[RMDB]
An RNA of 177 nucleotides, treated with 2A3 and DMS and read out base by base. For DMS the reverse transcriptase was MarathonRT.

RNA sequence: GGGAACGACUCGAGUAGAGUCGAAAAUAUCCUGCGUUCGCGCAGGAUACAGCACAAAACUCGGAGGGCGCGCACUCGGAGACAAAACAAAAACCGAAGCAAGUGAGCUUAGAUUCGUCUAAGCUAAUGAUAACAAGUUAUUCGUAACUUGUUAUCAAAAAGAAACAACAACAACAAC
Reactivity to 2A3 in 0.01 (KOAc 150mM, MgCl2 10mM, bicine 150mM(pH8.5), 24C), signal-to-noise 5, nucleotides 027 to 126: u040a000u000c000c000u000g010c000g020u020u050c270g000c010g000c110a000g000g000a000u000a000c000a010g060c050a020c020a060a110a100a040c020u020c040g130g010a040g010g050g030c030g000c010g000c040a030c030u020c020g030g000a030g020a030c060a010a130a020a010c050a020a120a030a010a000c020c030g050a050a000g070c060a080a060g100u130g150a010g000c000u010u000a000g000a030u030u050c150g010u000c140u000a000a000g000c000u030a020a090
Reactivity to DMS in 0.01 (KOAc 150mM, MgCl2 10mM, bicine 150mM(pH8.5), 24C), signal-to-noise 8, nucleotides 027 to 126: u000a010u000c000c000u000g020c000g030u000u010c200g040c020g030c010a010g000g000a000u000a000c110a100g010c120a070c070a090a090a130a100c060u000c020g010g010a060g000g000g020c040g000c060g010c050a060c050u000c030g000g010a090g010a060c120a040a060a080a070c100a070a060a060a100a090c040c030g000a050a090g020c140a070a130g010u010g010a040g010c000u000u000a010g000a030u000u010c210g010u000c000u000a010a000g000c010u000a020a070
Description:
It was measured as part of the RMDB library M2PK50. 2A3 is a SHAPE reagent: it acylates the 2'-hydroxyl of flexible nucleotides of all four kinds.